[RMDB]
RNA sequence: GGGAACGACUCGAGUAGAGUCGAAAAGUGCUUGGUUCGCCAAGCACAAAAAAUCCUAAGUCCAACAGCGACCUGAAUGAGCUUUGAUCUAUCGGAAACGAUAGGGAGCUCGCGGUCGACAUGGAUAUGGAAAAAAAGGAACACUUCGGUGUUCCAACACCUCAUACGUGUUCGCACGUAUGAGGUGAAAAGAAACAACAACAACAAC
Reactivity to DMS in 0.01 (KOAc 150mM, MgCl2 10mM, bicine 150mM(pH8.5), 24C), signal-to-noise 1, nucleotides 027 to 156: g010u010g030c010u000u000g000g020u010u010c300g020c000c000a030a000g040c030a000c010a000a000a170a050a070a130u000c010c000u000a030a270g020u010c000c010a060a080c150a190g050c080g000a070c030c000u000g060a100a110u000g030a000g000c000u000u000u030g060a070u000c000u000a010u000c010g060g000a200a140a300c040g010a010u000a000g030g000g030a000g070c000u000c000g020c300g010g010u000c000g000a030c000a300u000g050g020a030u000a240u000g000g000a000a000a000a170a230a090a110g060g050a040a090c000a010c030u000u030c300g050g000u000g000u000u000c000c000a040a080
Reactivity to 2A3 in 0.01 (KOAc 150mM, MgCl2 10mM, bicine 150mM(pH8.5), 24C), signal-to-noise 3, nucleotides 027 to 156: g000u000g000c000u010u000g000g020u070u110c190g090c110c000a000a000g000c000a000c010a000a000a000a000a000a000u000c030c000u040a130a020g010u010c010c010a030a020c040a230g080c040g000a030c000c030u220g150a270a300u260g000a030g000c000u300u250u070g040a040u040c000u000a000u000c010g050g040a080a090a060c010g010a000u000a000g000g010g000a010g000c000u000c000g010c000g000g000u010c000g030a090c020a080u050g000g000a010u030a090u110g020g040a040a090a030a000a000a030a130g010g000a000a010c000a000c010u050u130c280g090g000u000g000u000u000c000c000a000a000